Conditions: 150 mM KOAc, 10 mM MgCl2 and 150 mM bicine (pH 8.5), 24 C. This 207-nucleotide RNA was probed chemically with 2A3 and DMS. Values cover nucleotides 27 to 156. DMS adducts were read by reverse transcription with MarathonRT. Values are in units of 0.01, from 0 to 300, in steps of 10. Source: RMDB library OK3TST, as collected in RNAgym.

RNA sequence: GGGAACGACUCGAGUAGAGUCGAAAAUAUACGCUCAUACAUUUAUAUACACAUUCUCACACCUCGACACACUCACAUGCACUUAUCUAUACACUCAUACAUGGAGACACUCAGAUACUUAGAUACACACACACAUACAUGCAGACACACACUCCAACUAUUUUACCCGAUUCGUCGGGUAAAAUAGAAAAGAAACAACAACAACAAC
Reactivity to 2A3 in 0.01 (KOAc 150mM, MgCl2 10mM, bicine 150mM(pH8.5), 24C), signal-to-noise 4, nucleotides 027 to 156: u140a000u030a010c040g050c000u100c040a040u110a120c040a060u090u210u130a170u090a010u070a060c070a010c030a130u080u030c050u030c030a070c000a030c030c020u090c040g080a030c010a000c000a000c060u030c020a050c010a030u060g020c030a020c050u080u030a060u080c030u020a060u030a100c050a030c060u030c020a050u070a180c020a030u090g060g010a040g010a030c040a010c030u050c020a000g010a060u070a100c030u060u060a050g020a060u070a060c050a000c000a010c000a000c000a000c000a070u030a030c000a010u060g020c020a020g080a020c010a000c010a000c000a000c010u020c030c000a050a040
Reactivity to DMS in 0.01 (KOAc 150mM, MgCl2 10mM, bicine 150mM(pH8.5), 24C), signal-to-noise 2, nucleotides 027 to 156: u010a090u010a030c030g030c030u030c040a110u000a120c050a080u000u000u000a080u000a100u000a130c080a110c050a060u000u010c020u000c040a090c030a040c010c050u000c040g030a080c040a070c030a090c080u010c010a080c030a100u010g000c030a020c020u010u000a050u000c100u000a080u000a070c080a040c010u000c040a050u000a030c060a040u000g020g010a110g020a080c030a030c040u020c030a050g000a100u000a080c050u000u000a040g020a100u000a030c060a040c060a130c050a050c020a030c030a180u000a040c030a040u000g000c050a040g000a040c010a050c040a030c060a080c000u000c050c020a030a240